Background:
Structure probing data (DMS and 2A3) for a 177-nucleotide construct. 2A3 adducts were read by reverse transcription with SuperScript II with manganese. For DMS, 34,769 sequencing reads were counted. It was measured as part of the RMDB library OK1LIB. DMS adducts were read by reverse transcription with MarathonRT.
RNA sequence: GGGAACGACUCGAGUAGAGUCGAAAACUAAGGAGCGUGUGCUGGCGGCGGUCCUUCACGGUGCGUGGAUCCGGGCGGAUUACCAGUACGUGCGCGAGUUGUGUGCGCGGCUCGGAGCUACGGAAAAGCUGGUGCGCUCGUUCGUGGGCGCACUAGCAAAAGAAACAACAACAACAAC
Reactivity to DMS in 0.01 (KOAc 150mM, MgCl2 10mM, bicine 150mM(pH8.5), 24C), signal-to-noise 7, nucleotides 027 to 126: c050u010a090a080g000g000a070g010c040g020u020g010u010g010c020u010g010g000c050g010g000c010g000g000u000c030c020u000u000c090a070c100g010g010u020g000c010g020u000g000g000a050u000c020c010g000g000g010c020g000g000a150u030u040a120c070c050a100g000u030a180c080g020u010g000c010g010c000g000a090g010u010u010g000u010g000u000g010c010g020c000g010g020c000u000c010g000g000a040g000c040u000a030c010g000g010a070a060a070a110
Reactivity to 2A3 in 0.01 (KOAc 150mM, MgCl2 10mM, bicine 150mM(pH8.5), 24C), signal-to-noise 4, nucleotides 027 to 126: c020u050a030a030g050g000a040g040c020g010u030g000u050g020c010u010g010g020c000g000g000c010g000g040u000c000c000u000u020c030a020c030g040g040u080g010c010g010u010g000g000a020u000c000c000g000g000g000c010g000g030a040u010u080a080c010c000a000g030u020a050c000g010u030g000c020g000c000g010a110g040u030u070g030u040g000u010g000c010g010c000g030g000c000u000c000g000g000a010g000c000u010a000c010g030g000a020a030a000a020